[RMDB]
RNA sequence: GGGAACGACUCGAGUAGAGUCGAAAAUCUUACUUCGGUAAGAGCUAUACCUUUGUGUAAGCAAAUGUAGGGAGCCUACAGGGACCCAUUGGGUCCUGGGUAGGCGAAGAACUACAUUGCAGCUUACACUCUGGUCUAUAUGACUAUUCGUAGUCAAAUACGCUAUUUACUUCGGUAAAUAGCGUAUAAAAGAAACAACAACAACAAC
Reactivity to DMS in 0.01 (KOAc 150mM, MgCl2 10mM, bicine 150mM(pH8.5), 24C), signal-to-noise 3, nucleotides 027 to 156: u000c000u000u000a000c020u010u000c260g050g030u000a020a020g010a030g010c100u000a110u010a050c000c000u010u000u010g030u000g030u000a000a030g040c020a260a060a000u000g000u000a020g010g000g020a300g030c000c010u000a000c010a300g000g010g000a020c000c000c010a270u010u000g070g030g000u000c000c000u010g020g050g070u000a000g010g010c020g010a040a080g010a120a140c020u010a010c010a020u000u000g040c110a190g000c000u000u000a010c000a000c010u000c050u000g020g000u000c140u000a080u000a100u020g000a030c010u000a060u000u010c140g040u000a030g030u000c010a070a190
Reactivity to 2A3 in 0.01 (KOAc 150mM, MgCl2 10mM, bicine 150mM(pH8.5), 24C), signal-to-noise 4, nucleotides 027 to 156: u010c000u010u010a000c000u030u040c230g090g000u000a000a010g010a020g010c050u130a060u050a170c000c000u010u010u020g000u010g000u000a000a000g000c010a030a000a020u000g000u000a000g030g010g010a020g000c000c000u000a010c020a030g010g000g010a000c000c010c090a120u150u300g020g000g000u000c010c000u010g060g080g010u000a000g010g000c010g000a000a000g000a000a010c000u000a000c010a010u000u040g060c040a010g000c010u000u000a000c000a000c000u000c020u000g000g020u000c060u060a180u040a100u170g010a000c000u010a030u090u100c200g110u090a030g060u110c000a000a030

The data come from the RNA Mapping Database (RMDB), library RNAMAK. This 207-nucleotide RNA was probed chemically with DMS and 2A3. For 2A3 the reverse transcriptase was SuperScript II with manganese. The reactions ran in a buffer of 150 mM KOAc, 10 mM MgCl2 and 150 mM bicine (pH 8.5), at 24 C. DMS adducts were read by reverse transcription with MarathonRT.